[RMDB]
The record gives the reactivity of an RNA of 207 nucleotides to 2A3 and DMS. The reactions ran in a buffer of 150 mM KOAc, 10 mM MgCl2 and 150 mM bicine (pH 8.5), at 24 C. The DMS profile rests on 3,358 reads.
RNA sequence: GGGAACGACUCGAGUAGAGUCGAAAAGUGCCGGCAAUACAGUGUGUAUGGAGGUCUCAAUGGCUCGGAAGUGCCAGCAAACCGGCGUAGAUAUUAGCAGACGUAUGGGCGUAAGACUUUUCUUGAAAAAAGUACAUAAGCUUCGGCUUAUGUACAAGCACGUAAAAAAGUUCGCUUUUUUACGUGCAAAAGAAACAACAACAACAAC
Reactivity to 2A3 in 0.01 (KOAc 150mM, MgCl2 10mM, bicine 150mM(pH8.5), 24C), signal-to-noise 3, nucleotides 027 to 156: g070u070g010c020c000g010g050c050a040a030u100a080c040a050g100u030g030u020g000u190a050u050g040g030a050g040g060u010c030u020c070a100a140u090g020g000c020u030c070g000g100a100a040g040u050g050c000c000a030g010c070a080a040a040c010c030g020g000c010g030u040a060g030a050u100a050u180u160a050g060c080a010g000a030c020g070u050a030u080g090g010g010c040g010u020a040a050g030a020c000u000u090u010u010c020u030u050g040a100a000a030a040a030a020g000u000a000c000a010u010a000a000g010c030u020u030c140g030g000c000u000u000a000u010g000u000a000c000a000a000
Reactivity to DMS in 0.01 (KOAc 150mM, MgCl2 10mM, bicine 150mM(pH8.5), 24C), signal-to-noise 2, nucleotides 027 to 156: g020u010g000c020c020g030g050c060a160a130u000a090c030a120g000u020g050u010g030u000a060u000g000g000a120g000g000u000c020u000c030a110a130u000g010g000c040u010c030g030g000a160a150g020u000g030c030c020a060g000c040a040a110a120c030c000g010g020c000g040u000a080g010a110u000a080u000u000a120g000c080a090g000a060c050g040u000a050u000g010g020g010c030g040u030a040a090g000a090c060u000u000u000u000c020u000u000g000a000a060a080a110a160a150g010u000a010c000a030u000a000a020g010c000u000u000c300g070g010c010u000u000a000u000g030u020a000c000a030a060